[RMDB]
RNA sequence: GGGAACGACUCGAGUAGAGUCGAAAAGAUAUGGAUACUUUCGCUCGAUAAGCAAGGGUCGGAAACGACCCAUUGCUUUUGACGAGCGAAGUAUCCUAAGUCAAACGUGUAAGUUCGCUUACACGAAGAUUUCAAUAUGGUUCGCCAUAUUGAAAUCAAAAGAAACAACAACAACAAC
Reactivity to DMS in 0.01 (KOAc 150mM, MgCl2 10mM, bicine 150mM(pH8.5), 24C), signal-to-noise 6, nucleotides 027 to 126: g010a010u000a180u010g000g000a010u000a000c000u000u010u000c010g010c000u000c000g020a130u010a020a010g010c000a010a020g010g000g020u000c010g020g000a040a030a090c000g020a020c010c000c000a010u000u000g010c000u000u000u000u010g020a200c140g000a010g010c000g010a000a010g000u000a000u000c000c000u000a000a060g000u000c010a130a150a270c020g010u000g010u000a000a010g010u000u010c300g010c010u000u000a000c000a010c000g010a100a110
Reactivity to 2A3 in 0.01 (KOAc 150mM, MgCl2 10mM, bicine 150mM(pH8.5), 24C), signal-to-noise 6, nucleotides 027 to 126: g010a000u040a010u090g010g000a010u000a010c000u160u290u300c020g000c000u000c010g190a190u060a300a000g000c000a000a020g020g000g010u010c020g000g000a060a030a000c010g000a000c010c000c000a100u000u010g000c010u010u010u020u120g160a080c020g000a000g000c010g000a000a000g000u000a000u000c010c000u000a010a000g010u000c020a050a040a090c030g000u000g000u000a000a020g000u040u200c300g000c140u000u000a000c000a000c000g020a060a050
The data come from the RNA Mapping Database (RMDB), library TTRDES.
Chemical mapping of a 177-nucleotide RNA with DMS and 2A3.
Values cover nucleotides 27 to 126.
DMS adducts were read by reverse transcription with MarathonRT.